[RMDB]
RNA sequence: GGGAACGACUCGAGUAGAGUCGAAAAUACCGCAGGCCUGCGGUGCGGCAGUGUGGAGACCUGCCGUAAGCCGUGUUGUUUUGACAACCGGGAGGAAGCGUAUGCGGAGGCAGCGCUUUCAGGGUCUAAAAGUAUGGGAUCUUCGGAUCCCAUACAACUCUAGCUAUAGGUUCGCCUAUAGCUAGAGAAAAGAAACAACAACAACAAC
Reactivity to DMS in 0.01 (KOAc 150mM, MgCl2 10mM, bicine 150mM(pH8.5), 24C), signal-to-noise 2, nucleotides 027 to 156: u000a150c020c010g020c120a070g030g030c010c030u020g010c000g020g040u000g000c060g000g020c000a040g030u000g000u030g010g040a300g020a100c190c010u000g000c030c010g030u000a040a070g000c000c000g040u000g000u010u000g000u000u000u010u010g010a090c000a030a040c000c000g010g010g020a180g010g000a010a020g010c020g010u010a080u000g030c000g010g030a300g050g010c000a100g010c020g000c030u000u000u000c010a070g000g000g000u000c010u000a070a100a130a160g020u000a010u000g010g020g000a020u010c000u000u000c280g080g000a000u000c010c000c000a000u000a000c010a030a080
Reactivity to 2A3 in 0.01 (KOAc 150mM, MgCl2 10mM, bicine 150mM(pH8.5), 24C), signal-to-noise 5, nucleotides 027 to 156: u080a010c000c000g000c010a020g000g010c000c020u030g000c000g010g010u010g000c000g010g000c000a010g010u050g020u120g280g080a070g050a090c000c000u000g000c000c000g000u000a000a010g020c000c010g100u120g020u150u010g010u010u090u110u300g150a020c000a000a010c000c000g000g000g000a010g000g000a010a000g000c000g000u040a300u210g010c030g050g100a040g290g000c000a000g000c000g000c000u010u000u000c000a010g010g000g000u010c000u010a060a050a010a050g010u000a000u000g000g000g000a010u000c020u030u060c170g070g000a000u000c010c000c000a000u000a000c000a000a000